Structure probing data (DMS and 2A3) for a 177-nucleotide construct. The reactions ran in a buffer of 150 mM KOAc, 10 mM MgCl2 and 150 mM bicine (pH 8.5), at 24 C. As a SHAPE reagent, 2A3 marks flexible, mostly unpaired nucleotides at the ribose 2'-OH. The 2A3 profile rests on 1,329 reads.
RNA sequence: GGGAACGACUCGAGUAGAGUCGAAAAAAUUCCUAGUAAGUGUGUAUCAACAAUGGAUAUUGAAUAAGUCCCUGUAGCUUGUACACACCGCCCGUCACUAUCUCAGAUGUUUUUCAGGAUGAAGAGUUUCACUUUAAGGGUUCGCCCUUAAAGUGAAAAAAGAAACAACAACAACAAC
Reactivity to DMS in 0.01 (KOAc 150mM, MgCl2 10mM, bicine 150mM(pH8.5), 24C), signal-to-noise 2, nucleotides 027 to 126: a120a140u040u010c020c010u000a100g010u010a060a070g030u000g060u000g050u030a030u000c020a060a010c070a070a060u000g020g010a000u000a090u030u040g020a120a090u020a040a110g020u000c020c020c040u000g020u020a090g000c190u000u000g020u000a010c030a080c000a000c020c060g030c070c070c020g000u030c040a030c100u020a060u000c050u010c040a040g050a080u000g000u000u000u000u000u000c040a120g040g020a040u000g000a180a050g000a060g000u010
Reactivity to 2A3 in 0.01 (KOAc 150mM, MgCl2 10mM, bicine 150mM(pH8.5), 24C), signal-to-noise 3, nucleotides 027 to 126: a000a000u010u010c010c000u020a020g060u100a040a070g000u020g000u000g050u010a050u180c010a010a120c030a050a090u050g060g020a030u140a080u200u120g060a110a070u100a180a110g040u020c000c000c000u000g170u040a040g000c060u010u020g010u000a010c000a000c000a000c010c030g000c000c040c010g030u010c010a010c080u080a080u040c040u000c020a010g020a090u050g070u000u000u020u080u050c070a030g060g000a080u060g060a050a050g010a010g110u020